An RNA of 207 nucleotides, treated with 2A3 and DMS and read out base by base. For 2A3 the reverse transcriptase was SuperScript II with manganese. Reactivities are given for positions 27 through 156. For DMS, 4,598 sequencing reads were counted. For DMS the reverse transcriptase was MarathonRT.
RNA sequence: GGGAACGACUCGAGUAGAGUCGAAAAGUUCGCAUGGUGCACUUUUGUGUUAUUAGUAACUAAGUAAGCUUACAAUCGAAAAUGUUUAACCAUAAAAGGGUAAAAUGGUGUAAGACAGUCUGAUACUUUACGGCUUCACGUUUCGACGUGAAGCCAAUCAGGUCUUAUGAUUCGUCAUAAGACCUGAAAAAGAAACAACAACAACAAC
Reactivity to 2A3 in 0.01 (KOAc 150mM, MgCl2 10mM, bicine 150mM(pH8.5), 24C), signal-to-noise 3, nucleotides 027 to 156: g060u070u070c040g020c110a050u160g090g000u060g020c010a040c020u110u090u150u180g030u010g020u070u080a080u030u050a090g070u060a000a050c060u010a080a040g090u020a040a020g070c030u030u040a050c100a080a090u130c060g070a090a020a020a080u040g020u060u080u050a020a000c010c000a020u140a120a140a010a030g090g000g020u040a070a010a020a020u050g010g000u010g010u050a010a040g020a050c020a020g040u040c050u020g040a040u050a220c060u060u040u110a070c120g010g000c000u000u000c000a000c010g020u020u090u100c200g070a030c000g010u000g000a000a000g000c000c000a000a000
Reactivity to DMS in 0.01 (KOAc 150mM, MgCl2 10mM, bicine 150mM(pH8.5), 24C), signal-to-noise 2, nucleotides 027 to 156: g000u000u000c040g050c030a190u010g000g000u010g010c070a030c010u000u000u010u000g010u000g010u010u010a090u000u000a100g020u010a040a110c080u000a060a120g020u010a090a100g020c010u000u010a040c010a060a130u000c040g010a060a100a080a100u010g010u010u010u000a090a070c060c020a060u000a070a070a170a130g010g010g010u000a010a060a070a050u000g010g000u000g010u000a040a040g000a090c040a010g000u000c030u010g010a120u010a050c030u000u000u000a090c120g020g010c000u000u000c010a000c020g020u000u000u000c290g020a080c000g050u000g010a000a000g020c010c020a000a020